The record gives the reactivity of an RNA of 177 nucleotides to DMS and 2A3. High DMS reactivity at an A or C suggests that its Watson-Crick edge is free.

RNA sequence: GGGAACGACUCGAGUAGAGUCGAAAAGGGGAAGACAGUUUACUCAUUUGCUCUCUCCUUUCAUACAGUCAGCUGGUCCCUCUCCUCAGGUGUAGACCACCUAUUAUCAUUUUACCUGUUUUGAUUCUCGCAAGUAAAUUUUCGAAUUUACUUGCGAAAAAGAAACAACAACAACAAC
Reactivity to DMS in 0.01 (KOAc 150mM, MgCl2 10mM, bicine 150mM(pH8.5), 24C), signal-to-noise 5, nucleotides 027 to 126: g030g030g000g010a060a070g020a070c060a050g010u010u000u020a110c210u030c110a120u010u020u010g010c100u000c040u000c010u000c010c020u000u000u010c070a100u020a140c130a080g020u010c100a050g020c040u000g010g010u010c020c020c010u000c010u000c030c040u000c110a050g010g020u000g000u010a140g010a120c130c020a060c030c040u000a090u000u000a060u030c060a100u010u000u010u020a110c150c100u010g000u000u010u000u020g000a210u010u010c110
Reactivity to 2A3 in 0.01 (KOAc 150mM, MgCl2 10mM, bicine 150mM(pH8.5), 24C), signal-to-noise 8, nucleotides 027 to 126: g030g010g010g030a070a050g050a060c030a020g020u060u140u170a150c100u100c070a140u090u070u160g020c020u000c000u000c000u010c020c000u010u040u010c050a070u100a090c010a020g060u070c030a020g010c020u050g010g040u060c010c000c000u020c010u010c000c010u040c030a020g000g010u020g030u050a060g080a100c010c020a020c000c010u040a110u150u080a060u080c110a070u010u110u110u110a100c040c050u030g030u030u010u010u020g070a080u070u020c040